[RMDB]
RNA sequence: GGGAACGACUCGAGUAGAGUCGAAAAUAAAUUGGUCUGUACACAUCCCAUACAUUGUAUUAGGGGCAAUAAUAUCUAAUUGAACUUAGCCGUUUAAAAUUUAGUGCAUAAAUCUGGGCUAACACCAGCUACCAGUUAUGUUCGCAUAACUGGUAGCAAAAGAAACAACAACAACAAC
Reactivity to DMS in 0.01 (KOAc 150mM, MgCl2 10mM, bicine 150mM(pH8.5), 24C), signal-to-noise 2, nucleotides 027 to 126: u010a040a060a070u010u030g020g000u000c030u020g000u010a030c020a000c170a160u000c000c000c010a210u030a050c050a100u010u040g010u020a110u020u000a070g020g070g000g040c120a050a060u030a070a050u040a070u000c070u000a080a050u000u010g000a160a090c160u010u010a030g000c000c000g010u050u000u020a020a040a070a070u050u000u000a020g000u070g010c090a140u010a000a030a030u000c040u000g000g000g070c010u000a010a040c170a090c080c040a100
Reactivity to 2A3 in 0.01 (KOAc 150mM, MgCl2 10mM, bicine 150mM(pH8.5), 24C), signal-to-noise 4, nucleotides 027 to 126: u200a010a080a000u050u070g110g030u010c040u030g110u110a100c060a000c000a040u020c030c010c000a030u080a040c060a080u100u220g070u080a100u040u130a090g020g000g000g000c020a030a030u120a090a060u100a050u130c060u090a030a250u110u130g030a030a060c020u030u010a030g000c020c000g150u110u040u120a080a150a000a000u090u150u070a070g050u080g110c080a040u150a060a090a040u060c050u070g040g000g020c050u070a040a020c000a060c070c000a000
Chemical mapping of a 177-nucleotide RNA with DMS and 2A3. 2A3 adducts were read by reverse transcription with SuperScript II with manganese.